[RMDB]
The record gives the reactivity of an RNA of 177 nucleotides to 2A3 and DMS.
The reactions ran in a buffer of 150 mM KOAc, 10 mM MgCl2 and 150 mM bicine (pH 8.5), at 24 C.
Reactivities are given for positions 27 through 126.
RNA sequence: GGGAACGACUCGAGUAGAGUCGAAAAGAUAUGGACUGGGACAUGCCUGUUCUAUCGGAAACGAUAGGCAGGCAACAGCCCAGGUCCUAAGUCAAAACGAAUCUUUUCGUUCGCGAAAAGAUUCGAACUACAAGUUGUAGUUCGCUACAACUUGUAGAAAAGAAACAACAACAACAAC
Reactivity to 2A3 in 0.01 (KOAc 150mM, MgCl2 10mM, bicine 150mM(pH8.5), 24C), signal-to-noise 5, nucleotides 027 to 126: g020a010u070a050u150g010g000a000c000u000g010g000g040a040c040a140u080g000c010c000u020g020u300u300c010u000a000u000c000g020g010a090a050a030c000g000a000u000a010g000g000c000a000g000g000c010a000a000c000a010g000c000c010c000a000g030g040u020c000c000u020a100a050g070u020c040a020a010a070a140c010g000a000a000u000c010u020u010u020u010c000g040u030u080c300g010c000g090a000a000a010a000g000a000u000u000c000g000a020a010
Reactivity to DMS in 0.01 (KOAc 150mM, MgCl2 10mM, bicine 150mM(pH8.5), 24C), signal-to-noise 7, nucleotides 027 to 126: g010a030u010a300u000g010g000a170c000u000g010g000g000a050c090a210u000g000c000c000u000g000u000u010c000u000a000u010c000g000g010a110a090a160c000g000a000u000a000g000g010c000a010g000g010c000a000a000c160a100g000c000c000c000a020g010g010u000c000c010u000a040a150g010u000c040a070a060a090a240c020g000a010a000u000c000u000u000u000u000c000g010u000u010c230g020c020g000a000a000a010a010g000a020u000u000c010g000a020a140